[RMDB]
RNA sequence: GGGAACGACUCGAGUAGAGUCGAAAAACUCCGGCCCGAAGGGUUGAGUAGCACUCAGAGGGAGGAAUCCACACGGAGUAGAACAGAGAAAUCACCUCCAGAGGACCCCUUCAGCGAACAGAAGAGCGUAUAACAGUUAGUUCGCUAACUGUUAUACAAAAGAAACAACAACAACAAC
Reactivity to DMS in 0.01 (KOAc 150mM, MgCl2 10mM, bicine 150mM(pH8.5), 24C), signal-to-noise 5, nucleotides 027 to 126: a060c040u000c030c020g020g000c030c020c020g020a170a120g020g020g010u010u000g020a080g020u010a080g010c070a300c040u000c060a070g010a240g010g000g010a100g000g000a070a090u000c010c020a030c140a280c120g010g010a030g030u000a070g010a090a150c130a140g000a100g010a080a090a090u010c030a150c090c010u000c010c010a110g000a180g000g000a050c030c030c000c020u000u000c020a050g000c050g000a060a070c090a070g000a060a070g000a090g020c150
Reactivity to 2A3 in 0.01 (KOAc 150mM, MgCl2 10mM, bicine 150mM(pH8.5), 24C), signal-to-noise 4, nucleotides 027 to 126: a010c010u000c020c000g080g050c020c020c020g120a090a030g030g000g000u050u050g040a040g060u090a030g090c050a010c060u060c050a020g020a040g070g030g000a080g010g030a080a140u010c010c010a050c010a000c160g020g010a020g020u070a100g050a170a050c090a030g100a000g030a140a130a050u020c030a040c020c010u010c010c010a020g020a020g050g010a030c000c010c010c030u020u000c000a030g040c030g090a060a020c020a050g130a130a010g050a040g080c060